[RMDB]
RNA sequence: GGGAACGACUCGAGUAGAGUCGAAAAGAGGGCUCCAUCUGGGGGCCGAAGCAUGAGCCCAGCUCAAGGAUAUGCCGUUAUUACAAACAGGGGCACUGUUAUCGGGAGAACACAUGUCGCUACUCCCUAAGUCAAGGCUAUUCGUAGCCUUGACUUAAAAAGAAACAACAACAACAAC
Reactivity to DMS in 0.01 (KOAc 150mM, MgCl2 10mM, bicine 150mM(pH8.5), 24C), signal-to-noise 3, nucleotides 027 to 126: g000a150g010g000g020c000u010c050c090a200u010c250u010g010g010g020g000g020c000c010g000a040a040g000c050a050u000g000a130g000c030c010c030a110g030c020u000c040a150a110g000g000a060u000a040u000g000c040c060g010u000u000a090u010u020a090c220a080a030a080c070a050g020g020g010g030c060a070c090u000g000u010u000a090u010c090g000g000g000a100g000a100a080c130a090c060a080u000g010u000c050g010c030u010a130c060u000c000c000c020
Reactivity to 2A3 in 0.01 (KOAc 150mM, MgCl2 10mM, bicine 150mM(pH8.5), 24C), signal-to-noise 2, nucleotides 027 to 126: g080a030g030g000g020c010u010c070c020a160u150c170u220g270g000g010g020g000c010c020g000a020a010g000c000a030u040g040a010g020c010c030c000a020g020c020u050c020a040a100g040g000a060u050a050u160g010c000c010g060u020u090a090u110u170a120c210a080a080a010c000a020g030g020g130g000c070a040c090u040g020u060u030a070u220c080g080g020g000a110g040a070a000c050a000c010a100u140g060u140c030g010c040u070a100c010u010c010c000c000
This 177-nucleotide RNA was probed chemically with DMS and 2A3. The 2A3 profile rests on 1,031 reads. The DMS profile rests on 2,041 reads. It was measured as part of the RMDB library OK2TRN. 2A3 adducts were read by reverse transcription with SuperScript II with manganese. The RNA was probed in 150 mM KOAc, 10 mM MgCl2 and 150 mM bicine (pH 8.5) at 24 C.